An RNA of 177 nucleotides, treated with DMS and 2A3 and read out base by base. For 2A3, 2,962 sequencing reads were counted. The RNA was probed in 150 mM KOAc, 10 mM MgCl2 and 150 mM bicine (pH 8.5) at 24 C.
RNA sequence: GGGAACGACUCGAGUAGAGUCGAAAAGAUGGCUCUAAAGACGUGUUCGUACACUUCUCUGCUAUCCAGAACGAUGGCUACAAAUCCCUGGACGAAGGUCAGAAAGUAUCCUUCACCAUCGAAAGCGGUGUAAAACACUGUUCGCAGUGUUUUACACAAAAGAAACAACAACAACAAC
Reactivity to DMS in 0.01 (KOAc 150mM, MgCl2 10mM, bicine 150mM(pH8.5), 24C), signal-to-noise 2, nucleotides 027 to 126: g000a100u000g010g010c020u010c170u000a040a120a030g040a020c050g000u010g010u000u000c290g000u010a060c030a020c030u000u000c050u000c090u020g000c090u000a030u000c010c120a100g010a140a080c070g000a020u000g020g000c160u060a050c160a090a040a150u010c000c020c020u010g010g020a090c120g020a040a040g030g000u020c090a110g010a050a130a160g020u000a080u020c010c010u000u000c010a190c050c010a010u000c040g010a030a070a100g020c190g000
Reactivity to 2A3 in 0.01 (KOAc 150mM, MgCl2 10mM, bicine 150mM(pH8.5), 24C), signal-to-noise 3, nucleotides 027 to 126: g050a040u060g020g000c010u010c030u130a190a130a010g020a020c010g010u030g000u020u120c130g080u240a010c010a000c000u050u020c030u000c010u050g000c000u010a040u000c020c030a020g050a130a020c020g010a010u000g030g010c020u100a010c080a030a070a040u030c000c000c000u020g020g000a020c060g000a010a010g010g000u040c020a040g210a110a160a000g070u090a080u120c000c000u000u000c000a020c010c000a020u040c000g040a110a030a010g100c100g050